[RMDB]
RNA sequence: GGGAACGACUCGAGUAGAGUCGAAAAAGUACUUACUCAGAUUUAAAUAGGCUGCAGCAGUACCACAAGGCUUACGAGAGCGUAAUAACUUGUAUGUCACUUUACAGUUUGCAAAGCAAUUGUGCAUCCAUCCAGCAACACUGUGAGGAAUGUGGCAAUUAAAUAGUCGUUUCGACGACUAUUUAAUAAAAGAAACAACAACAACAAC
Reactivity to 2A3 in 0.01 (KOAc 150mM, MgCl2 10mM, bicine 150mM(pH8.5), 24C), signal-to-noise 7, nucleotides 027 to 156: a000g040u020a020c020u070u030a050c010u010c020a040g030a130u110u160u300a140a170a150u210a170g140g000c020u030g030c030a020g000c010a000g010u010a020c000c010a020c020a070a050g030g000c020u020u050a010c020g020a020g000a020g110c020g040u020a010a090u090a080a070c030u050u050g050u110a080u050g010u010c000a010c020u040u050u050a010c010a010g000u010u020u010g010c040a080a080a060g010c010a070a170u180u150g110u130g070c010a040u010c060c000a030u040c010c030a020g010c010a010a010c030a010c110u010g020u030g020a030g050g130a120a060u160g010u010g000g000c000a000
Reactivity to DMS in 0.01 (KOAc 150mM, MgCl2 10mM, bicine 150mM(pH8.5), 24C), signal-to-noise 4, nucleotides 027 to 156: a080g010u000a020c020u000u000a050c020u000c010a070g010a100u000u000u000a070a120a210u000a100g020g020c020u000g010c070a060g010c100a070g000u010a030c030c040a050c100a090a190g010g000c060u000u000a040c040g000a300g000a040g030c030g010u010a050a100u000a080a150c040u000u000g010u000a110u000g020u000c020a070c010u000u000u000a010c030a080g030u000u000u000g030c000a030a050a050g010c050a030a090u000u000g020u010g010c030a090u000c050c020a120u000c030c030a130g000c020a060a060c090a300c020u010g040u010g010a060g000g010a030a040u000g020u000g010g010c020a070
Conditions: 150 mM KOAc, 10 mM MgCl2 and 150 mM bicine (pH 8.5), 24 C. An RNA of 207 nucleotides, treated with 2A3 and DMS and read out base by base. The 2A3 profile rests on 5,628 reads.